[RMDB]
RNA sequence: GGGAACGACUCGAGUAGAGUCGAAAAGUGGAGUGGCGUUUCUGACUUGUCCCUCAAACAAAAACUCCUUUACACCUUCUAUGGUAAGGAGUCACUUGAGAACCCAACCUACAUUUACCACUCCGCACGGGCCCCCGCUUCGGCGGGGGCAAAAGAAACAACAACAACAAC
Reactivity to DMS in 0.01 (KOAc 150mM, MgCl2 10mM, bicine 150mM(pH8.5), 24C), signal-to-noise 2, nucleotides 027 to 129: g050u000g060g000a060g000u000g000g000c140g030u000u000u000c000u000g070a100c160u000u030g070u000c020c000c010u000c000a000a180a030c050a020a110a050a000a010c010u000c000c050u000u080u000a130c090a010c070c070u000u010c050u000a060u120g000g000u000a010a010g020g000a010g000u000c000a000c300u040u070g000a000g100a080a300c000c080c000a060a160c000c150u110a070c150a000u100u100u010a000c000c000a000c020u050c000c000g050c060a120c110g000g030
Reactivity to 2A3 in 0.01 (KOAc 150mM, MgCl2 10mM, bicine 150mM(pH8.5), 24C), signal-to-noise 2, nucleotides 027 to 129: g000u000g010g000a020g000u000g000g030c080g050u030u050u040c060u040g140a080c010u090u120g040u050c000c000c020u010c040a060a070a000c080a000a010a000a040a000c080u000c000c000u000u020u090a070c060a000c050c000u250u260c050u210a080u300g020g010u000a000a000g000g000a000g040u000c030a030c010u070u000g010a000g000a090a040c000c000c050a040a090c000c060u060a130c030a140u070u150u150a010c000c000a000c000u000c000c000g000c000a080c110g050g070

This 170-nucleotide RNA was probed chemically with DMS and 2A3.
Values cover nucleotides 27 to 129.
The 2A3 profile rests on 2,351 reads.
For DMS, 1,457 sequencing reads were counted.
2A3 adducts were read by reverse transcription with SuperScript II with manganese.
The RNA was probed in 150 mM KOAc, 10 mM MgCl2 and 150 mM bicine (pH 8.5) at 24 C.